[RMDB]
RNA sequence: GGGAACGACUCGAGUAGAGUCGAAAAUAAUAACUGGCAAAGAAAACAAUAAUUUCGCAGUAGCUGCGUAAUAGCACUCUGCAUCGCCUAACGGUAUCUCCUAUGUACCGUUAACGCGAUUCAACCUAUAGUAGGAUACGCUAGGCACUGCCGUUUGCCGACGAAGUAUGUUCGCAUACUUCGUCGGAAAAGAAACAACAACAACAAC
Reactivity to 2A3 in 0.01 (KOAc 150mM, MgCl2 10mM, bicine 150mM(pH8.5), 24C), signal-to-noise 3, nucleotides 027 to 156: u110a000a000u060a050a080c050u110g060g000c030a090a050a020g080a070a210a070a020c080a090a100u170a140a130u090u130u160c070g000c000a000g000u200a060g000c120u050g000c000g000u030a020a080u020a140g020c000a000c060u080c010u020g000c020a020u020c000g030c000c000u010a000a000c000g020g000u020a020u020c110u070c050c070u140a150u270g020u010a000c000c010g000u000u000a030a010c020g020c000g010a020u060u070c050a050a060c000c040u090a050u060a220g140u030a060g010g070a070u030a080c030g000c140u120a030g030g000c020a030c110u040g000c010c000g020u030u060u090g020